[RMDB]
Structure probing data (DMS) for a 177-nucleotide construct. DMS adducts were read by reverse transcription with MarathonRT. The DMS profile rests on 1,627 reads. The data come from the RNA Mapping Database (RMDB), library TTRINS.
RNA sequence: GGGAACGACUCGAGUAGAGUCGAAAAGAUAUGGACUCGGUUGGGAGUCUGACAUAUAUCAUCCGUUACUCGGAAACGAGUAACGGAUGAUAUAUGUCCAGACGAAGAACAACCCGAGUCCUAAGUCGCUAUAAUAAACCUUCGGGUUUAUUAUAGCAAAAGAAACAACAACAACAAC
Reactivity to DMS in 0.01 (KOAc 150mM, MgCl2 10mM, bicine 150mM(pH8.5), 24C), signal-to-noise 1, nucleotides 027 to 126: g000a130u000a300u000g000g010a020c000u000c000g010g020u010u000g000g010g000a160g000u000c000u010g000a030c010a010u000a000u000a000u000c000a000u000c000c000g050u010u000a000c000u000c030g020g020a130a120a190c010g010a010g000u000a010a000c000g000g020a000u010g000a000u000a000u000a010u000g000u010c130c170a000g020a000c000g000a140a140g020a140a160c010a040a020c070c070c050g010a040g000u000c000c000u000a000a100g020u010c190